[RMDB]
RNA sequence: GGGAACGACUCGAGUAGAGUCGAAAAUUAGGUUUCGACCUAAAAACUGGCGUACUACUUGGGAGAAGACCAUGGGAGCACGCUCCCAAAUAGGAGCGUGCGAAGAACAUGGUACCUUCGACGAUCAAGUAUCGCGAUAAGCACCUUUCGAGGUGAAGAUGCUCAGUGUUUUCGAACACUGAGCAUCAAAAGAAACAACAACAACAAC
Reactivity to 2A3 in 0.01 (KOAc 150mM, MgCl2 10mM, bicine 150mM(pH8.5), 24C), signal-to-noise 1, nucleotides 027 to 156: u080u000a070g040g020u160u030u090c300g110a080c000c000u050a080a090a070a020a040c070u080g040g000c010g040u040a040c010u000a000c030u000u000g030g000g000a020g040a060a030g080a050c000c000a000u000g080g000g000a000g000c000a000c050g000c000u000c090c080c000a070a170a020u220a000g000g000a000g080c000g030u080g000c000g010a000a000g000a000a000c010a000u010g000g050u110a240c010c010u000u000c040g150a150c000g000a050u000c010a000a000g000u010a040u300c010g040c060g040a020u120a090a030g150c000a000c000c000u060u160u300c280g040a040g000g020u020g000a050a160